[RMDB]
The record gives the reactivity of an RNA of 177 nucleotides to 2A3 and DMS.
The reactions ran in a buffer of 150 mM KOAc, 10 mM MgCl2 and 150 mM bicine (pH 8.5), at 24 C.
In probing experiments dimethyl sulfate is read out at A N1 and C N3, which are open when not base-paired.
DMS adducts were read by reverse transcription with MarathonRT.
For 2A3, 15,351 sequencing reads were counted.

RNA sequence: GGGAACGACUCGAGUAGAGUCGAAAAUAACAUAUUUGAUCACAAUUCCUUUCUGUCCAUAACAUUAAUGUAAAAAUAUGUGUCCGUGAGAUGGCACAAAGAAGGCGGGGACGGUCGAAUAAAGGAGAUCACCUAUGGUAUUCGUACCAUAGGUGAUAAAAGAAACAACAACAACAAC
Reactivity to 2A3 in 0.01 (KOAc 150mM, MgCl2 10mM, bicine 150mM(pH8.5), 24C), signal-to-noise 9, nucleotides 027 to 126: u170a030a020c050a030u090a060u040u040u070g050a060u070c020a010c060a170a110u080u050c010c000u060u120u050c050u090g150u030c050c030a090u120a200a060c030a070u210u270a210a110u180g080u200a050a070a030a050a030u160a080u110g010u000g030u020c020c030g050u070g060a140g020a110u140g010g000c010a010c010a010a010a020g070a020a010g030g010c030g000g010g010g020a000c030g010g010u010c010g040a020a010u080a080a100a030g130g020a100g010
Reactivity to DMS in 0.01 (KOAc 150mM, MgCl2 10mM, bicine 150mM(pH8.5), 24C), signal-to-noise 6, nucleotides 027 to 126: u020a130a120c110a110u010a030u010u010u000g000a040u010c030a060c090a170a180u020u010c000c000u010u010u020c030u000g000u020c040c050a050u030a080a070c080a080u020u030a080a090u030g020u010a030a070a040a060a060u020a070u000g000u000g000u010c010c030g030u030g020a160g010a110u020g000g000c030a020c030a010a050a070g000a060a060g000g000c100g010g000g000g000a070c130g000g020u000c030g000a040a020u010a020a040a070g020g000a070g000